[RMDB]
RNA sequence: GGGAACGACUCGAGUAGAGUCGAAAAGGAUCCUUAGUAGUCAGGGUAACUGCCACCAGAUCAGUUACCAGUGAUGACUAGUCAAUGUGUCAUCGAUCUGGUGGAUGACGUAUUGAAAUAAGGAUCGCUACACGAAUGUAUUCGUACAUUCGUGUAGAAAAGAAACAACAACAACAAC
Reactivity to DMS in 0.01 (KOAc 150mM, MgCl2 10mM, bicine 150mM(pH8.5), 24C), signal-to-noise 9, nucleotides 027 to 126: g000g000a010u000c000c000u000u000a040g010u010a040g010u000c010a060g010g010g010u000a030a030c030u000g000c180c050a130c150c140a080g000a070u010c010a030g000u000u000a010c020c010a110g010u010g010a110u000g010a030c040u000a080g000u000c030a020a020u000g000u000g010u000c010a000u000c010g000a070u010c100u000g010g010u010g000g000a010u000g010a020c020g010u000a030u000u000g010a030a240a130u000a010a010g010g000a010u000c000g010
Reactivity to 2A3 in 0.01 (KOAc 150mM, MgCl2 10mM, bicine 150mM(pH8.5), 24C), signal-to-noise 7, nucleotides 027 to 126: g030g000a010u000c000c000u020u010a030g060u020a010g010u050c040a030g050g040g030u040a030a030c030u050g030c020c020a090c030c030a030g010a160u040c000a010g020u010u020a030c000c020a030g030u030g070a090u030g030a040c020u040a040g070u020c020a010a040u030g030u020g000u030c010a010u000c010g070a090u020c070u160g130g070u070g160g000a000u010g010a000c020g030u030a030u020u070g040a050a050a070u060a000a010g000g000a000u000c010g010